The record gives the reactivity of an RNA of 207 nucleotides to 2A3 and DMS. The RNA was probed in 150 mM KOAc, 10 mM MgCl2 and 150 mM bicine (pH 8.5) at 24 C. The DMS profile rests on 2,335 reads.
RNA sequence: GGGAACGACUCGAGUAGAGUCGAAAAAGAUGAGCUAUUCAAUGUGAGAAGGACUUAAAACACAACAGCCAAGUAUUGGGGGUUAACUAAGCACUUUACAUGUGUUAACUCAUUCGCUUUUUGCAGUCUUAUGAAGUAAGUACUAUUACUCCCAUUACAGUGGUAAUCGGUUCGCCGAUUACCACUGAAAAGAAACAACAACAACAAC
Reactivity to 2A3 in 0.01 (KOAc 150mM, MgCl2 10mM, bicine 150mM(pH8.5), 24C), signal-to-noise 3, nucleotides 027 to 156: a000g050a020u080g010a000g010c040u080a030u170u050c070a140a050u090g020u080g030a040g010a110a050g030g000a020c050u050u100a070a050a140a010c110a030c060a080a120c050a080g130c030c010a060a040g100u050a190u190u130g020g000g010g010g010u030u000a050a020c030u060a090a030g030c030a020c060u130u150u150a070c090a080u090g040u010g020u120u050a080a060c010u020c030a050u080u070c070g020c080u060u080u000u140u140g040c030a010g010u010c020u050u050a030u120g060a060a060g030u060a020a040g010u030a020c020u010a010u100u070a020c050u000c000c000c010a020u070u090a070
Reactivity to DMS in 0.01 (KOAc 150mM, MgCl2 10mM, bicine 150mM(pH8.5), 24C), signal-to-noise 1, nucleotides 027 to 156: a120g010a050u000g000a060g040c050u000a070u000u000c040a020a080u020g010u000g000a170g000a060a020g000g010a020c040u000u000a040a080a080a060c070a050c010a090a070c030a050g030c020c090a000a220g030u010a140u000u000g010g020g050g040g020u000u000a060a110c110u000a020a040g000c020a050c020u000u000u010a110c020a050u000g010u010g000u000u000a030a020c010u000c000a080u000u020c060g010c080u000u000u000u000u000g010c040a090g010u000c060u000u010a080u000g000a040a070g000u000a010a030g010u010a070c110u000a120u000u000a060c050u000c000c010c070a120u010u000a120